[RMDB]
RNA sequence: GGGAACGACUCGAGUAGAGUCGAAAAUAAGUUGAUAAUGACCAAGUCAAGGUCCAGGCUGGCAACAGAGCAGACAGAGCGAGGCACAUCGAUGGGUAGCGAGGAAAGUCGACUUAAAGUCGUCCAACAUGUUAACACAGUUCGCUGUGUUAACAUGAAAAGAAACAACAACAACAAC
Reactivity to 2A3 in 0.01 (KOAc 150mM, MgCl2 10mM, bicine 150mM(pH8.5), 24C), signal-to-noise 3, nucleotides 027 to 126: u080a050a000g060u050u080g070a070u080a220a060u110g050a030c020c020a060a000g100u100c040a100a100g090g020u000c020c010a010g040g000c000u000g020g010c000a040a030c030a070g020a010g030c020a010g030a050c010a010g050a000g020c040g030a040g040g000c060a030c010a100u060c050g030a090u050g000g000g030u010a010g040c010g040a010g010g070a120a030a010g070u020c000g000a020c000u010u070a120a020a010g010u010c010g010u000c010c000a010a040
Reactivity to DMS in 0.01 (KOAc 150mM, MgCl2 10mM, bicine 150mM(pH8.5), 24C), signal-to-noise 4, nucleotides 027 to 126: u010a070a080g000u000u000g020a110u010a090a100u010g010a100c020c030a080a130g010u000c090a090a120g010g000u000c020c070a090g000g010c050u000g020g000c090a050a060c070a070g000a090g000c100a060g020a080c100a060g010a080g000c090g010a070g030g010c070a040c090a070u000c070g000a080u000g000g010g020u000a050g010c070g000a100g010g000a050a070a120g000u010c020g010a010c010u000u000a070a090a060g000u000c010g000u000c010c010a050a180